Annotation: This 207-nucleotide RNA was probed chemically with DMS and 2A3.
RNA sequence: GGGAACGACUCGAGUAGAGUCGAAAAUCCUAAGUCGAUGCAAGCAAAUUCAUUUGCCAACAGCGUUUAUCGGAAACGAUAAACGACAUGGCAGACGAAUGAAGGCUUGAACUACAUCGAUAUGGAAAACCCUACUGCUGUUCGCAGCAGUAGGGAAGUAUCCUCAUGAGUUCGCUCAUGAGGAUACAAAAGAAACAACAACAACAAC
Reactivity to DMS in 0.01 (KOAc 150mM, MgCl2 10mM, bicine 150mM(pH8.5), 24C), signal-to-noise 3, nucleotides 027 to 156: u000c000c000u000a080a290g000u000c020g010a030u010g000c000a030a040g010c030a110a100a060u000u000c010a010u000u000u000g020c000c000a070a090c040a180g020c060g000u000u000u020a020u020c000g000g010a170a140a300c030g010a020u000a000a000a020c000g030a010c080a300u010g010g000c020a040g010a010c010g010a020a010u000g000a050a080g020g000c060u010u010g000a080a180c040u010a130c000a010u000c010g020a020u000a240u010g000g000a090a080a090a140c000c010c000u000a000c000u000g010c000u000g010u010u020c300g030c020a030g000c000a000g010u000a000g010g010g010a000a020
Reactivity to 2A3 in 0.01 (KOAc 150mM, MgCl2 10mM, bicine 150mM(pH8.5), 24C), signal-to-noise 6, nucleotides 027 to 156: u020c010c000u030a140a020g020u000c000g000a000u010g010c000a000a000g000c010a090a150a070u000u000c000a010u010u020u030g000c000c020a090a050c100a180g050c000g000u000u000u000a000u000c010g020g040a050a040a070c010g000a010u000a010a000a000c010g030a070c020a040u020g000g000c000a000g020a010c030g020a000a010u060g070a120a020g140g020c000u010u010g010a030a040c080u150a030c070a000u000c000g010a000u010a080u110g020g040a040a110a030a030c000c010c000u000a000c000u000g020c000u010g060u070u110c300g020c140a000g000c010a000g000u000a000g010g000g000a000a000
The DMS profile rests on 5,334 reads.
For 2A3, 8,353 sequencing reads were counted.
For DMS the reverse transcriptase was MarathonRT.
Values cover nucleotides 27 to 156.
For 2A3 the reverse transcriptase was SuperScript II with manganese.
Source: RMDB library RNAMAK, as collected in RNAgym.